RNA sequence: GGGAACGACUCGAGUAGAGUCGAAAAGAAAGAAAGAAAUGAGUUUUCUGCGACUGACGGAUUAUUGCAGAGCACUGCAAGGGAACAGAAAAACUCUUUUUCAGCCGACCGUCUGGGCACACCUGAAUCACGACCGGAAGCUUCGGCUUCCGGUCAAGUUUUAUGCUAUGUUCGCAUAGCAUAAAACAAAAGAAACAACAACAACAAC
Reactivity to DMS in 0.01 (KOAc 150mM, MgCl2 10mM, bicine 150mM(pH8.5), 24C), signal-to-noise 1, nucleotides 027 to 156: g010a100a140a150g020a130a070a110g020a010a050a060u010g020a060g000u000u000u000u000c000u000g000c040g000a300c000u000g040a120c170g000g000a140u010u040a220u010u000g010c010a130g000a300g020c240a110c000u000g000c020a050a280g050g040g000a270a060c010a000g000a030a030a040a010a010c020u000c000u010u010u000u000u010c060a230g010c060c070g000a100c060c020g000u000c070u010g000g000g000c000a130c050a160c050c040u020g000a100a170u010c060a130c040g010a040c000c050g040g040a050a050g040c050u000u000c300g060g000c000u000u000c000c020g020g040u020c000a000a010
Reactivity to 2A3 in 0.01 (KOAc 150mM, MgCl2 10mM, bicine 150mM(pH8.5), 24C), signal-to-noise 1, nucleotides 027 to 156: g030a020a100a010g040a010a110a010g030a010a120a040u120g000a010g000u020u010u010u050c010u010g000c000g050a050c040u060g020a010c010g000g080a090u200u150a060u120u100g000c000a030g010a150g090c120a100c300u000g010c010a020a040g000g000g030a000a010c010a000g030a030a030a010a020a030c010u030c000u070u060u000u030u000c040a050g000c000c000g020a050c000c020g000u030c010u080g000g010g030c020a010c010a010c030c010u050g100a060a070u160c040a040c090g010a000c000c000g000g000a000a000g000c000u040u030c080g060g000c000u010u010c010c030g010g010u020c000a000a010
The record gives the reactivity of an RNA of 207 nucleotides to DMS and 2A3. High 2A3 reactivity points to a flexible backbone, as in loops and unpaired stretches. The data come from the RNA Mapping Database (RMDB), library M2RFPK. DMS adducts were read by reverse transcription with MarathonRT. 2A3 adducts were read by reverse transcription with SuperScript II with manganese.